The data come from the RNA Mapping Database (RMDB), library M2RFPK. Chemical mapping of a 207-nucleotide RNA with 2A3. For 2A3 the reverse transcriptase was SuperScript II with manganese.
RNA sequence: GGGAACGACUCGAGUAGAGUCGAAAAUGAGACAAACACGCUUCACAAUGUGCGCCAAAGAAACAUUGUUUAUGCAAAGGCACUUCGCAAUGUGUGCUCAAACAUUGCUUAUUCAAACACGCUUCACAAAAGAAUCAGUGGUUCGCCACUGAUUCAACUCUGGAUCGUGCUUCGGCACGAUCCAGAGAAAAGAAACAACAACAACAAC
Reactivity to 2A3 in 0.01 (KOAc 150mM, MgCl2 10mM, bicine 150mM(pH8.5), 24C), signal-to-noise 1, nucleotides 027 to 156: u300g000a010g010a060c060a040a160a000c070a000c080g000c000u010u000c010a000c000a020a000u000g010u000g010c020g050c000c010a130a050a070g170a010a040a000c000a000u000u000g090u000u050u130a120u160g050c020a000a120a170g050g040c000a000c000u050u000c030g000c000a000a000u000g000u000g010u000g010c070u100c170a030a080a000c000a000u000u000g000c000u030u050a210u140u110c070a160a010a020c030a010c080g140c010u220u200c120a020c050a060a170a080a000g000a000a000u000c000a000g000u000g060g000u050u040c150g010c010c000a000c000u000g000a000u000u010c000a000a010